[RMDB]
RNA sequence: GGGAACGACUCGAGUAGAGUCGAAAAGCGCCGUGUUCGCACGGCGCAAAAAAACCUUUGUGUGUACGUAGCAUCGAUCGUGAUUGGACCCAUUGGGUCCAUGGUCACGGGAGCUACUACACACUCUGGUAAAAACGUGAUUCUUCGGAAUCACGAACUUCACCUUUAGGUUCGCCUAAAGGUGAAGAAAAGAAACAACAACAACAAC
Reactivity to 2A3 in 0.01 (KOAc 150mM, MgCl2 10mM, bicine 150mM(pH8.5), 24C), signal-to-noise 2, nucleotides 027 to 156: g030c020g030c010c020g010u010g060u080u070c290g010c060a010c000g000g060c000g000c020a060a000a020a000a020a000a000c020c010u030u010u010g000u000g000u000g010u000a030c110g000u010a020g010c030a300u160c100g110a140u120c000g050u000g000a010u020u090g010g000a000c000c010c100a230u080u300g020g000g000u010c030c010a010u080g060g040u000c000a000c000g010g000g010a010g060c000u000a010c000u000a010c000a000c000a000c000u040c000u000g000g030u090a050a110a050a000a010c000g000u000g000a000u000u000c000u030u030c300g100g000a000a000u000c000a000c000g000a030a020
Reactivity to DMS in 0.01 (KOAc 150mM, MgCl2 10mM, bicine 150mM(pH8.5), 24C), signal-to-noise 1, nucleotides 027 to 156: g010c010g000c000c030g120u010g010u010u010c300g100c010a020c010g040g080c000g150c020a000a080a020a050a000a030a020c000c000u010u000u010g020u000g010u020g000u000a010c120g000u000a040g010c040a230u000c200g040a140u000c030g010u000g020a080u000u010g020g000a030c010c000c010a300u000u000g040g030g020u000c000c000a010u010g030g010u010c010a020c020g010g010g000a100g000c000u000a010c010u010a020c010a010c000a000c000u000c030u000g000g000u000a020a040a030a060a110c010g010u000g010a010u000u000c020u010u000c300g090g000a010a000u000c010a010c000g020a000a060